[RMDB]
RNA sequence: GGGAACGACUCGAGUAGAGUCGAAAAGUAUCCCUAGAUGAUAAAACACCGCACAUGGCUCGUAAGAGCGGUUAAAUUAGCAAGUAAUGCAAAUUACGCGAGGUAACGCAUGGCCUAGGCUUGUUAGAAAAGGGAGAAUCCUUCGGGAUUCUCCCAAGAAUAUGGAGCAGUUCGCUGCUCCAUAUUCAAAAGAAACAACAACAACAAC
Reactivity to DMS in 0.01 (KOAc 150mM, MgCl2 10mM, bicine 150mM(pH8.5), 24C), signal-to-noise 2, nucleotides 027 to 156: g010u000a110u010c000c000c000u000a160g000a140u000g020a100u000a130a130a160a090c050a050c000c010g010c020a110c030a150u000g000g020c040u000c030g010u000a100a130g010a090g030c000g020g010u000u000a030a080a120u000u000a060g000c050a070a080g000u000a030a070u000g030c070a050a080a090u000u000a040c030g000c040g000a140g020g020u010a070a050c050g020c030a030u000g020g020c050c030u000a090g020g000c020u000u000g000u000u000a080g000a100a080a040a170g010g010g000a030g000a040a010u000c000c010u000u000c300g050g010g020a030u000u000c000u000c000c000c010a000a010
Reactivity to 2A3 in 0.01 (KOAc 150mM, MgCl2 10mM, bicine 150mM(pH8.5), 24C), signal-to-noise 2, nucleotides 027 to 156: g030u010a090u100c010c000c010u020a060g060a130u180g030a020u180a180a110a000a000c030a020c010c010g010c020a030c030a080u070g150g000c010u050c070g090u060a140a010g040a050g110c110g000g000u020u090a060a120a010u080u080a010g050c020a100a010g000u080a210a030u070g030c070a070a000a060u140u040a060c070g000c050g060a020g050g060u060a130a030c040g000c060a060u060g040g000c020c020u000a020g020g030c040u040u020g010u050u000a030g120a020a150a030a020g010g000g000a000g000a000a000u000c000c000u010u060c140g000g010g000a000u010u000c000u000c000c000c000a010a000